[RMDB]
RNA sequence: GGGAACGACUCGAGUAGAGUCGAAAACAAAGCGCCUACACCGACUUUGACUGACAGCUGUUGACUACUGGAUGGCUGACGAGCGCAUAUUCCGUUGUUAACGACUCGUUUUGACAUAUUGAAUUAAGGUAAUGAGCUCGUUCGCGAGCUCAUUACCAAAAGAAACAACAACAACAAC
Reactivity to 2A3 in 0.01 (KOAc 150mM, MgCl2 10mM, bicine 150mM(pH8.5), 24C), signal-to-noise 1, nucleotides 027 to 126: c030a010a040a110g000c000g020c070c000u000a040c000a000c000c000g010a030c010u020u080u180g110a040c010u060g100a000c000a110g000c040u060g000u030u000g090a060c020u000a020c000u110g110g000a040u040g000g050c120u000g000a040c120g000a000g030c000g080c040a060u070a120u110u010c000c000g060u060u120g000u060u060a000a000c000g160a030c030u000c070g030u000u000u000u170g010a040c030a060u170a060u200u170g030a120a030u190u040a190a000
An RNA of 177 nucleotides, treated with 2A3 and read out base by base. The RNA was probed in 150 mM KOAc, 10 mM MgCl2 and 150 mM bicine (pH 8.5) at 24 C. 2A3 adducts were read by reverse transcription with SuperScript II with manganese.